[RMDB]
RNA sequence: GGGAACGACUCGAGUAGAGUCGAAAACGAUGACAUCAGCACCGAUGUGCGUCGGGCUCCGCACGCCGGUGGCCGCGAGGUGUUGCGGGUCGAGGUCGGCGCGCCCAGCCCGCUGCUGCGGGGCGGGCCCCGUAAUUACCUUCGGGUAAUUACGGGGAAAAGAAACAACAACAACAAC
Reactivity to DMS in 0.01 (KOAc 150mM, MgCl2 10mM, bicine 150mM(pH8.5), 24C), signal-to-noise 3, nucleotides 027 to 126: c070g000a100u040g000a060c040a040u010c030a100g030c090a040c090c050g000a040u020g010u020g010c010g020u020c020g000g010g000c010u000c040c240g000c020a050c050g020c000c020g010g000u010g000g010c030c000g000c030g000a080g010g020u010g000u020u010g000c040g000g030g000u010c150g010a090g030g000u010c030g000g000c030g000c060g000c020c050c140a080g000c030c000c010g010c010u010g000c070u010g010c080g000g010g000g020c040g000g010g010
Reactivity to 2A3 in 0.01 (KOAc 150mM, MgCl2 10mM, bicine 150mM(pH8.5), 24C), signal-to-noise 9, nucleotides 027 to 126: c040g070a080u140g050a010c020a070u060c030a030g070c050a040c040c030g020a050u110g050u070g100c010g020u020c010g010g030g000c020u060c040c000g000c000a010c010g020c020c000g030g040u080g060g040c010c010g060c030g040a080g040g110u110g060u160u110g020c020g030g040g030u110c100g040a050g020g180u060c020g010g010c020g000c000g020c010c010c010a010g010c020c000c000g000c010u080g020c020u070g020c040g010g020g010g000c000g000g010g010